[RMDB]
RNA sequence: GGGAACGACUCGAGUAGAGUCGAAAAUUACAUAAGUCUAACACCUUGUUUCGGACUAACAAGGACGGAUGGAGGAUGGCCGUCCCUCCAUAGUUAGACGUCCGAGAACCAGCCGAAAUGAAAAAGAGGGUAUAUUACGGUUCGCCGUAAUAUACCCAAAAGAAACAACAACAACAAC
Reactivity to DMS in 0.01 (KOAc 150mM, MgCl2 10mM, bicine 150mM(pH8.5), 24C), signal-to-noise 3, nucleotides 027 to 126: u070u040a090c170a100u020a090a100g000u010c110u010a060a020c100a180c070c020u000u010g010u000u000u000c020g010g050a080c100u000a090a050c040a050a170g030g000a020c100g010g000a020u000g000g000a000g030g000a050u010g030g020c020c020g010u020c300c010c020u000c000c000a000u000a080g010u010u020a050g050a130c010g000u000c000c000g040a110g000a060a100c100c230a080g000c000c010g010a020a050a040u030g040a080a070a020a100a060g020a230
Reactivity to 2A3 in 0.01 (KOAc 150mM, MgCl2 10mM, bicine 150mM(pH8.5), 24C), signal-to-noise 3, nucleotides 027 to 126: u150u090a070c050a040u220a050a100g050u000c000u010a040a010c040a060c140c010u010u030g020u010u040u040c080g110g010a140c050u030a000a100c040a040a020g000g010a060c020g060g050a000u030g000g010a040g010g020a040u070g090g000c040c010g020u060c020c000c000u000c000c000a020u000a070g060u040u000a080g020a090c000g010u050c030c010g050a070g010a090a050c010c010a010g010c000c000g040a040a020a020u120g130a080a030a020a020a000g230a100